[RMDB]
RNA sequence: GGGAACGACUCGAGUAGAGUCGAAAAGGCGGAGAAUCAGGGUUCGACUCCGGAGAGCGGGCCUGCGAGACGGCCCGCACAUCCAAGGACGGCAGCAGGCGCGGAACUUGCCCAAUGCGCGGCGCGCGCCAUGAGCAUCAUUCGUGAUGCUCAUGGCAAAAGAAACAACAACAACAAC
Reactivity to 2A3 in 0.01 (KOAc 150mM, MgCl2 10mM, bicine 150mM(pH8.5), 24C), signal-to-noise 2, nucleotides 027 to 126: g050g010c020g020g050a040g030a080a120u110c040a060g070g000g030u080u090c030g030a050c030u010c030c040g010g020a060g000a000g000c000g000g000g000c000c020u030g010c060g010a060g030a040c100g000g000c000c000c000g020c000a010c010a010u030c020c000a010a020g040g010a010c000g030g020c020a010g010c010a000g050g000c000g000c010g050g020a050a040c020u030u130g020c010c000c010a030a100u140g010c030g000c010g050g030c040g000c010g000c000
Reactivity to DMS in 0.01 (KOAc 150mM, MgCl2 10mM, bicine 150mM(pH8.5), 24C), signal-to-noise 4, nucleotides 027 to 126: g010g000c020g000g000a080g000a070a060u010c060a050g000g000g000u000u000c060g000a100c050u000c040c090g020g000a050g000a080g000c000g030g010g010c000c000u010g000c250g000a170g020a090c180g000g000c000c000c030g010c010a020c060a080u010c010c010a170a120g010g010a050c080g010g000c040a050g010c050a070g000g010c020g010c040g000g000a050a050c120u000u010g000c000c000c010a070a060u020g010c030g010c030g000g010c050g000c040g010c060
The record gives the reactivity of an RNA of 177 nucleotides to 2A3 and DMS. It was measured as part of the RMDB libraries RFM100 and RFMREP. 2A3 adducts were read by reverse transcription with SuperScript II with manganese. Conditions: 150 mM KOAc, 10 mM MgCl2 and 150 mM bicine (pH 8.5), 24 C. Values cover nucleotides 27 to 126. DMS adducts were read by reverse transcription with MarathonRT.